Structure probing data (DMS and 2A3) for a 207-nucleotide construct. The DMS profile rests on 11,904 reads. Values cover nucleotides 27 to 156. The RNA was probed in 150 mM KOAc, 10 mM MgCl2 and 150 mM bicine (pH 8.5) at 24 C.
[RMDB]
RNA sequence: GGGAACGACUCGAGUAGAGUCGAAAACUAGACUGUGUUCUGUUUAAAGAAGUGUUUGAUGAAGCUGUUAAAAGGCUUAGCUGCACACCAUACACAAUCAAUUUGGGCAUGAUUUCCAAUGUUACUAAACUACUAUUGAAACUGGGCUGGUACCAAAUACUGAACUAAGUUUCGACUUAGUUCAGUAAAAAGAAACAACAACAACAAC
Reactivity to DMS in 0.01 (KOAc 150mM, MgCl2 10mM, bicine 150mM(pH8.5), 24C), signal-to-noise 5, nucleotides 027 to 156: c040u000a100g030a080c040u000g020u000g020u000u000c050u000g010u000u000u000a070a080a140g000a100a170g020u010g010u000u010u020g010a080u010g000a080a080g020c010u010g010u000u010a070a100a140a200g020g020c030u000u000a070g020c020u000g020c050a130c040a060c040c030a060u000a050c040a030c050a050a080u000c080a030a150u000u000u000g020g030g030c040a070u000g000a120u010u010u010c040c040a050a090u000g010u000u000a130c040u000a040a060a070c050u000a050c050u000a110u000u010g000a060a060a080c040u000g000g010g030c040u010g010g000u000a070c030c020a050a070a270
Reactivity to 2A3 in 0.01 (KOAc 150mM, MgCl2 10mM, bicine 150mM(pH8.5), 24C), signal-to-noise 8, nucleotides 027 to 156: c030u030a010g050a030c030u030g020u010g030u130u030c040u030g110u080u120u120a140a140a060g060a090a030g010u020g020u060u190u080g090a120u090g030a030a020g000c030u030g020u130u150a070a140a060a010g030g000c010u020u020a020g020c010u020g000c020a010c000a000c040c020a030u080a100c040a010c000a050a070u080c020a040a100u070u040u070g000g010g000c060a040u040g060a110u070u060u040c050c000a050a050u070g030u080u070a090c040u090a060a100a050c030u090a030c020u040a070u090u120g040a080a050a020c030u040g000g030g010c020u040g010g020u030a060c010c000a030a020a080